Annotation:
An RNA of 207 nucleotides, treated with 2A3 and read out base by base. The reactions ran in a buffer of 150 mM KOAc, 10 mM MgCl2 and 150 mM bicine (pH 8.5), at 24 C.
[RMDB]
RNA sequence: GGGAACGACUCGAGUAGAGUCGAAAAAGGUUCGCUGUGGUGCAACUCUUAUUAGUAACUAUUCCAAAGCAAGUAUAGGAGAACAGGUUUUUAACUAUUUUUAGGCAGAUAAAAAAUAGUAUUUGACAAAAUCGAUUGUCGUUCGCGACAAUCGAAAGACUAAUCAUUGCUUCGGCAAUGAUUAGUCAAAAGAAACAACAACAACAAC
Reactivity to 2A3 in 0.01 (KOAc 150mM, MgCl2 10mM, bicine 150mM(pH8.5), 24C), signal-to-noise 1, nucleotides 027 to 156: a010g040g030u040u010c030g000c000u000g030u010g090g000u000g020c030a060a070c040u010c030u100u190a100u050u080a080g030u070a130a070c030u030a110u140u040c040c030a130a050a050g000c010a090a000g010u050a080u050a060g030g030a050g010a060a030c010a040g090g000u070u010u000u000u020a020a000c000u000a010u010u010u000u020u000a060g040g000c020a020g050a110u090a090a030a000a010a000a000u020a020g000u040a100u160u080u130g000a010c030a040a060a020a160u030c010g000a000u000u000g000u000c000g010u020u050c130g020c000g110a000c000a000a010u000c000g000a000a010a000
For 2A3 the reverse transcriptase was SuperScript II with manganese.